[RMDB]
RNA sequence: GGGAACGACUCGAGUAGAGUCGAAAACGACAGCGCCGUAUUGGCCUGCGCGAACUUGUCGCGUUCAUAGCCUUCGCGGGUGAAGGCGCGGACCACUCGCACCCCGGACAGCUGAUCGCGCAUCACCCGAGGGCUAGCUAUUCGUAGCUAGCCCUCGAAAAGAAACAACAACAACAAC
Reactivity to DMS in 0.01 (KOAc 150mM, MgCl2 10mM, bicine 150mM(pH8.5), 24C), signal-to-noise 3, nucleotides 027 to 126: c040g010a130c080a040g010c160g010c030c000g030u010a140u000u030g010g020c030c040u000g020c040g000c000g000a060a150c190u000u010g010u010c020g020c030g020u000u010c050a120u010a170g010c060c030u010u000c090g000c220g010g010g020u000g010a070a150g010g010c010g000c050g000g000a080c040c050a050c060u010c110g010c050a250c020c020c010c030g000g000a060c170a110g010c080u000g000a080u000c010g020c020g030c060a080u000c080a070c030c040
Reactivity to 2A3 in 0.01 (KOAc 150mM, MgCl2 10mM, bicine 150mM(pH8.5), 24C), signal-to-noise 2, nucleotides 027 to 126: c040g090a040c040a010g020c070g030c090c010g090u210a300u110u300g030g010c000c020u070g000c030g000c000g060a100a070c060u130u170g120u220c010g000c010g000u080u090c090a070u130a160g020c000c020u080u080c060g020c110g090g050g010u050g050a090a050g060g030c000g000c050g030g010a090c050c010a070c090u040c030g040c000a100c020c020c000c020g000g040a020c030a050g000c000u020g010a130u070c000g000c000g000c040a030u060c040a060c010c010

Conditions: 150 mM KOAc, 10 mM MgCl2 and 150 mM bicine (pH 8.5), 24 C. The record gives the reactivity of an RNA of 177 nucleotides to DMS and 2A3. Reactivities are given for positions 27 through 126. The data come from the RNA Mapping Database (RMDB), library OK2TRN. The DMS profile rests on 2,297 reads.